The data come from the RNA Mapping Database (RMDB), library OK2TRN.
An RNA of 177 nucleotides, treated with DMS and 2A3 and read out base by base.
For DMS the reverse transcriptase was MarathonRT.
The DMS profile rests on 8,370 reads.
For 2A3, 6,805 sequencing reads were counted.
Conditions: 150 mM KOAc, 10 mM MgCl2 and 150 mM bicine (pH 8.5), 24 C.
RNA sequence: GGGAACGACUCGAGUAGAGUCGAAAAGUUAUCCAUCGCGACAUCAAGAGUGAUAACAUUCUGCUGGGCCUUGACGGCUCUGUCAAGCUGACUGACUUUGGUUUCUGUGCGCAAAUAUCGCCGGAGACCUCCCUCAUUUAUUCGUAAAUGAGGGAGGAAAAGAAACAACAACAACAAC
Reactivity to DMS in 0.01 (KOAc 150mM, MgCl2 10mM, bicine 150mM(pH8.5), 24C), signal-to-noise 7, nucleotides 027 to 126: g010u000u000a040u000c030c050a100u010c070g010c300g010a060c120a060u010c130a100a090g000a070g020u010g000a140u010a060a110c030a070u000u000c020u000g010c160u010g010g000g000c030c020u010u010g020a150c190g000g010c020u000c020u010g000u000c030a060a220g010c090u000g000a080c100u000g010a050c060u000u010u000g020g000u000u000u000c000u000g000u010g020c000g020c210a060a070a120u010a110u010c050g010c010c010g000g000a040g000a060
Reactivity to 2A3 in 0.01 (KOAc 150mM, MgCl2 10mM, bicine 150mM(pH8.5), 24C), signal-to-noise 5, nucleotides 027 to 126: g000u010u030a030u040c010c020a050u040c050g030c050g140a090c030a140u160c090a140a040g040a020g070u090g040a050u050a140a040c020a030u040u030c010u030g080c030u040g010g020g020c010c000u070u110g130a080c070g060g000c030u000c030u030g010u030c020a030a030g000c030u070g070a070c030u030g000a020c020u110u080u120g070g010u050u040u060c030u020g100u120g010c010g000c050a030a210a160u200a080u130c030g000c000c000g030g020a020g010a020